Notes: Structure probing data (2A3) for a 207-nucleotide construct. The data come from the RNA Mapping Database (RMDB), library OK3TST. The reactions ran in a buffer of 150 mM KOAc, 10 mM MgCl2 and 150 mM bicine (pH 8.5), at 24 C.

RNA sequence: GGGAACGACUCGAGUAGAGUCGAAAAAAAUGAAUGAUUUUUAAAGACCUACGAUUUUUUUCAGAAUUUGGCCAGCAAUUCAACUUGUCUGUCUGCAAGUAAACUGGACUCCAAUCAUGUCAUCAUCUUCACUGUGGAGACCAUUGCUGACAUUUAAUCGUAAUUAGGACUUCGGUCCUAAUUACGAAAAAGAAACAACAACAACAAC
Reactivity to 2A3 in 0.01 (KOAc 150mM, MgCl2 10mM, bicine 150mM(pH8.5), 24C), signal-to-noise 1, nucleotides 027 to 156: a000a000a030u030g020a080a060u150g020a090u060u120u070u220u170a280a220a030g000a050c000c030u050a030c190g000a070u070u100u100u160u080u040u300c100a100g090a060a130u100u070u210g050g000c050c000a000g010c020a000a020u060u100c030a090a000c000u010u080g030u080c070u050g120u070c030u030g000c050a020a020g000u120a000a180a130c060u050g000g010a030c020u000c030c000a030a050u150c050a030u120g000u050c000a020u020c000a170u000c120u010u150c090a050c090u060g100u090g070g020a000g000a000c030c000a020u000u090g020c030u020g020a030c020a060u090u210u080a080a070